[RMDB]
RNA sequence: GGGAACGACUCGAGUAGAGUCGAAAAAAAGUUAGCGUACUAGAGUCGCCGUGAGUACGCUAUGGUUCCGUGAGACUCUACUCGAGCGUAUCAGGGAACCCACGUACAUACCGUACGUGCUAUAAAAACUACGGUGUAGUUUCGACUACACCGUAGUAAAAGAAACAACAACAACAAC
Reactivity to 2A3 in 0.01 (KOAc 150mM, MgCl2 10mM, bicine 150mM(pH8.5), 24C), signal-to-noise 3, nucleotides 027 to 126: a000a020a000g100u020u010a000g000c000g000u000a000c000u010a010g090a110g160u140c030g020c070c010g100u100g030a010g020u000a010c000g020c000u000a000u020g040g010u080u060c040c030g020u010g020a040g000a010c000u000c010u010a000c000u000c000g020a000g020c010g000u000a080u050c030a010g110g010g010a030a030c010c010c000a000c000g000u000a010c010a090u120a190c060c080g000u010a000c010g000u000g000c020u090a130u130a120a120a020a010
Reactivity to DMS in 0.01 (KOAc 150mM, MgCl2 10mM, bicine 150mM(pH8.5), 24C), signal-to-noise 3, nucleotides 027 to 126: a050a030a090g010u010u000a010g010c000g060u000a010c000u000a140g000a100g020u000c060g040c050c020g020u010g010a030g000u000a000c010g030c000u000a000u000g010g000u000u000c040c020g000u000g000a280g000a010c000u000c000u000a010c010u000c020g010a000g030c010g000u020a040u020c040a130g010g010g010a130a130c070c080c000a010c010g030u010a020c000a130u010a110c300c150g000u000a000c000g010u000g010c070u000a080u010a020a060a040a060
This 177-nucleotide RNA was probed chemically with 2A3 and DMS. The DMS profile rests on 2,190 reads. The data come from the RNA Mapping Database (RMDB), library M2PK90. For 2A3, 3,535 sequencing reads were counted. Reactivities are rounded to 0.1 and cut off at 0 and 3.